Chemical mapping of a 207-nucleotide RNA with 2A3 and DMS. For 2A3 the reverse transcriptase was SuperScript II with manganese. Conditions: 150 mM KOAc, 10 mM MgCl2 and 150 mM bicine (pH 8.5), 24 C. It was measured as part of the RMDB library M2RFPK. Values are in units of 0.01, from 0 to 300, in steps of 10.

RNA sequence: GGGAACGACUCGAGUAGAGUCGAAAACCGUGACAUUGCGAAAGCAAUGCUGGCGGUAGGUAGUCCUGGGCGGCGACAGCCUUGGACUGCGGCGUAAAGGUGUACCUGGGGCCGUUAAACCUAUCGUGAAAGGCAACUUGGUUCGCCAAGUUGCCAACAUCUUAUUCUUCUUCGGAAGAAUAAGAUGAAAAGAAACAACAACAACAAC
Reactivity to 2A3 in 0.01 (KOAc 150mM, MgCl2 10mM, bicine 150mM(pH8.5), 24C), signal-to-noise 5, nucleotides 027 to 156: c010c000g060u050g050a050c000a000u000u000g010c000g060a150a020a020g000c010a020a010u010g000c030u020g090g000c010g000g010u000a000g000g020u030a010g000u010c020c010u020g000g000g000c010g050g050c120g100a080c170a070g000c010c000u010u020g000g000a000c010u000g000c010g000g000c000g020u070a040a050a020g030g010u170g080u300a240c000c000u020g000g000g140g000c000c000g000u020u110a070a130a020c000c010u000a000u010c010g000u030g080a140a080a020g000g010c000a000a000c000u000u000g020g010u060u050c100g030c090c000a000a000g000u000u000g000c000c000a000a000
Reactivity to DMS in 0.01 (KOAc 150mM, MgCl2 10mM, bicine 150mM(pH8.5), 24C), signal-to-noise 2, nucleotides 027 to 156: c010c010g030u000g030a030c000a000u000u020g000c000g010a200a140a260g000c010a000a000u000g010c000u000g040g010c010g010g000u000a040g020g000u000a050g000u000c010c000u000g020g000g020c010g020g030c100g070a150c210a290g050c000c000u000u000g000g020a030c010u000g010c000g020g020c020g020u000a110a190a060g000g000u000g030u010a110c040c010u000g000g030g000g010c030c000g020u000u010a070a080a100c020c000u000a030u000c040g020u000g000a090a100a140g010g020c010a010a020c010u010u000g000g010u010u000c300g000c030c000a010a070g000u000u000g010c010c000a000a030